[RMDB]
RNA sequence: GGGAACGACUCGAGUAGAGUCGAAAAGAUAUGGACAGUUAAACCCGAUAAGUACCACUCGGAAACGAGUGAAGUACUUUUGACGGGUUAACUGUCCUAAGUCAAAACGUCUCGUUCGCGAGACGAAGUCCUAUCGAUUGUUCGCAAUCGAUAGGACAAAAGAAACAACAACAACAAC
Reactivity to DMS in 0.01 (KOAc 150mM, MgCl2 10mM, bicine 150mM(pH8.5), 24C), signal-to-noise 2, nucleotides 027 to 126: g010a050u020a200u010g010g010a030c010a030g000u010u000a030a060a070c010c000c000g000a110u010a040a010g010u000a000c010c000a000c010u010c000g000g000a080a040a060c000g000a010g010u010g000a080a110g030u000a000c000u000u000u000u010g010a270c110g020g010g000u010u000a000a020c000u000g010u000c000c000u000a020a050g000u000c030a130a110a110a280c020g020u000c000u000c000g020u000u010c260g010c000g010a000g030a030c000g000a040a090
Reactivity to 2A3 in 0.01 (KOAc 150mM, MgCl2 10mM, bicine 150mM(pH8.5), 24C), signal-to-noise 3, nucleotides 027 to 126: g020a000u010a010u050g010g010a010c000a000g010u040u050a230a270a210c030c010c020g110a250u160a300a010g020u000a010c000c010a010c020u000c000g000g020a020a010a010c010g000a020g000u000g010a030a030g010u000a000c000u000u040u060u160g280a130c030g010g000g000u000u000a000a000c000u000g000u010c000c000u010a000a000g010u000c000a030a040a090a100c020g000u000c040u010c010g040u080u100c300g030c020g110a010g000a000c010g010a040a020

An RNA of 177 nucleotides, treated with DMS and 2A3 and read out base by base. Reactivities are rounded to 0.1 and cut off at 0 and 3. 2A3 is a SHAPE reagent: it acylates the 2'-hydroxyl of flexible nucleotides of all four kinds. Conditions: 150 mM KOAc, 10 mM MgCl2 and 150 mM bicine (pH 8.5), 24 C. Source: RMDB library TTRDES, as collected in RNAgym.